[RMDB]
RNA sequence: GGGAACGACUCGAGUAGAGUCGAAAACGAUGCCGUAGGAAGAAAGACGACGUUUGUGCGCAAGUUCUUCGAUAUUAAGCAUCAUAACAACGAAAAGAACUAUAUGACGGGCCGCCUCAUCAAGUCGGUAAAAUGCGAGCCGUUCACUGUGAAGAGAACCAGUAGCUUGUUUCGACAAGCUACUGGUAAAAGAAACAACAACAACAAC
Reactivity to 2A3 in 0.01 (KOAc 150mM, MgCl2 10mM, bicine 150mM(pH8.5), 24C), signal-to-noise 1, nucleotides 027 to 156: c000g000a050u050g000c000c020g000u010a010g000g060a020a000g040a020a090a000g180a110c050g000a060c030g060u090u170u280g180u090g020c000g000c080a120a150g010u000u010c000u000u010c010g010a060u000a020u270u080a160a000g000c010a000u050c010a000u130a050a010c100a010a010c060g080a000a030a100a030g090a080a030c110u050a090u030a040u300g040a000c010g000g010g000c010c000g000c000c050u000c010a040u010c100a060a000g010u000c000g000g010u170a080a060a000a000u190g130c040g020a010g000c010c000g000u040u020c050a110c100u110g120u100g000a190a070g120a000g000a040
An RNA of 207 nucleotides, treated with 2A3 and read out base by base.
For 2A3, 393 sequencing reads were counted.
Source: RMDB library OK3TST, as collected in RNAgym.
Conditions: 150 mM KOAc, 10 mM MgCl2 and 150 mM bicine (pH 8.5), 24 C.
For 2A3 the reverse transcriptase was SuperScript II with manganese.